The data come from the RNA Mapping Database (RMDB), library M2PK90. An RNA of 177 nucleotides, treated with DMS and read out base by base. DMS adducts were read by reverse transcription with MarathonRT.

[RMDB]
RNA sequence: GGGAACGACUCGAGUAGAGUCGAAAAGGGUUUGGAUUACAUCAAUAGUAACAUGAGCAGAAGUAAACAGAACAAGAAGUACAGCGGUUAUUCAAGUUCAAAGUUCACACUAUCGCAAUAAAGGGAACCGGUACAAUCGAUUCGUCGAUUGUACCGGAAAAGAAACAACAACAACAAC
Reactivity to DMS in 0.01 (KOAc 150mM, MgCl2 10mM, bicine 150mM(pH8.5), 24C), signal-to-noise 1, nucleotides 027 to 126: g000g000g010u000u000u000g020g020a090u000u000a120c040a020u000c050a160a030u000a110g000u020a060a060c120a120u000g000a090g000c050a020g010a070a060g020u000a080a030a060c130a110g000a010a050c040a030a270g020a080a020g000u000a080c080a100g020c070g030g000u030u000a040u000u000c030a010a240g000u000u000c030a060a050a090g000u000u000c070a050c080a080c150u010a050u000c100g020c070a050a050u020a000a050a050g020g020g000a070a180